Structure probing data (DMS and 2A3) for a 177-nucleotide construct. The RNA was probed in 150 mM KOAc, 10 mM MgCl2 and 150 mM bicine (pH 8.5) at 24 C. In probing experiments dimethyl sulfate is read out at A N1 and C N3, which are open when not base-paired.

RNA sequence: GGGAACGACUCGAGUAGAGUCGAAAAUUUGCGCUUUCAGCGCUCAAUUUGAUAAAGAUUCGCACCUCUAUCAAACCGGGUAACCCCACCUUUGGCAAGGCCUACUGUCAGAUUAAAUCUGAACUACACAUCGUCCAAAUUUCGAUUUGGACGAUGUAAAAGAAACAACAACAACAAC
Reactivity to DMS in 0.01 (KOAc 150mM, MgCl2 10mM, bicine 150mM(pH8.5), 24C), signal-to-noise 2, nucleotides 027 to 126: u000u040u000g000c090g020c010u000u020u040c260a140g000c000g000c030u030c250a010a010u000u000u010g010a070u000a080a030a050g000a160u000u010c130g040c110a060c090c000u000c080u020a050u000c000a020a060a080c060c080g000g000g000u000a080a100c060c010c020c010a100c020c050u000u000u000g020g000c030a040a040g000g030c090c090u000a060c160u010g010u000c020a000g010a010u000u000a080a040a300u000c040u000g030a030a020c130u060a070c130
Reactivity to 2A3 in 0.01 (KOAc 150mM, MgCl2 10mM, bicine 150mM(pH8.5), 24C), signal-to-noise 5, nucleotides 027 to 126: u070u030u080g000c000g000c000u070u240u300c190a020g000c000g050c000u000c010a030a120u030u030u110g120a120u110a140a100a040g050a040u060u050c020g010c010a020c000c000u000c020u050a080u110c050a060a080a020c040c010g010g000g080u020a030a030c010c010c000c000a030c020c000u060u080u040g040g000c040a060a010g070g000c000c010u030a060c040u110g030u020c000a010g000a040u110u150a060a050a080u040c020u020g030a040a090c030u100a010c030